[RMDB]
RNA sequence: GGGAACGACUCGAGUAGAGUCGAAAAGUUAACAGUGAUUUAUCCUGGCUCUCUGGUGAACUUACUAGGCAAGGAGCAUCAGUCUAAGUAACAGGUGGUUAUUAAUGUUGCUCUUAACUAAUGACAAUCAUGCGGUACCAUUCGUGGUACCGCAUGAAAAAGAAACAACAACAACAAC
Reactivity to 2A3 in 0.01 (KOAc 150mM, MgCl2 10mM, bicine 150mM(pH8.5), 24C), signal-to-noise 1, nucleotides 027 to 126: g040u030u040a000a090c020a060g000u030g000a020u020u070u150a110u180c000c000u000g000g000c000u040c000u060c000u060g020g020u110g090a030a030c000u000u000a130c000u030a020g070g030c120a200a000g010g000a000g110c000a000u010c000a000g070u000c000u040a120a020g000u000a130a000c000a030g000g190u100g110g000u090u150a080u240u260a010a010u200g080u040u000g000c000u000c000u000u060a000a000c000u020a120a170u010g030a000c010a010a070
Reactivity to DMS in 0.01 (KOAc 150mM, MgCl2 10mM, bicine 150mM(pH8.5), 24C), signal-to-noise 1, nucleotides 027 to 126: g030u000u000a110a060c110a040g000u000g030a030u020u010u000a070u090c000c000u000g000g010c050u000c070u010c000u000g000g020u000g000a110a040c060u010u000a070c020u000a040g080g020c030a190a020g010g010a060g010c000a010u000c010a020g020u000c170u050a040a050g000u000a050a070c010a110g010g050u000g000g000u000u000a090u010u030a170a070u000g010u010u010g010c070u000c040u020u000a040a130c100u040a100a070u070g000a130c140a030a110